Structure probing data (2A3 and DMS) for a 177-nucleotide construct. 2A3 is a SHAPE reagent: it acylates the 2'-hydroxyl of flexible nucleotides of all four kinds. Values cover nucleotides 27 to 126. For 2A3, 1,415 sequencing reads were counted. It was measured as part of the RMDB library OK1LIB. 2A3 adducts were read by reverse transcription with SuperScript II with manganese. The RNA was probed in 150 mM KOAc, 10 mM MgCl2 and 150 mM bicine (pH 8.5) at 24 C.
RNA sequence: GGGAACGACUCGAGUAGAGUCGAAAAUCUCCUCAUCUCGAGACUCGAUUCAGUCACCUGCUUCGACGACAUUCUCUCGGGGUCGGCACUCCGGAGGCUGCUCAAGCCCCUCAUCUGCUGGAUGGAGUAGUCUUUCCGCAUUCGUGCGGAAAGACUAAAAAGAAACAACAACAACAAC
Reactivity to 2A3 in 0.01 (KOAc 150mM, MgCl2 10mM, bicine 150mM(pH8.5), 24C), signal-to-noise 3, nucleotides 027 to 126: u030c010u020c010c030u020c020a150u010c030u010c060g090a070g030a060c020u010c030g050a060u090u000c010a000g120u090c010a050c040c010u030g010c010u040u060c030g070a060c020g010a060c030a190u170u020c040u010c010u030c040g000g010g060g020u030c040g040g000c030a010c080u070c010c000g060g040a040g020g000c010u030g000c030u040c130a020a120g000c000c000c000c020u000c010a130u060c050u080g050c030u120g100g020a060u040g030g030a050g020
Reactivity to DMS in 0.01 (KOAc 150mM, MgCl2 10mM, bicine 150mM(pH8.5), 24C), signal-to-noise 1, nucleotides 027 to 126: u000c070u000c000c000u000c090a100u050c000u000c050g000a060g010a100c080u000c170g000a200u000u010c100a100g020u020c010a100c110c010u000g000c070u000u000c030g000a020c100g000a030c210a070u050u000c020u000c040u010c050g000g030g020g000u020c070g030g000c140a000c040u000c080c070g050g000a090g000g000c000u000g080c030u050c000a030a050g000c050c010c000c000u000c030a110u030c000u030g070c140u000g000g000a050u020g080g040a000g000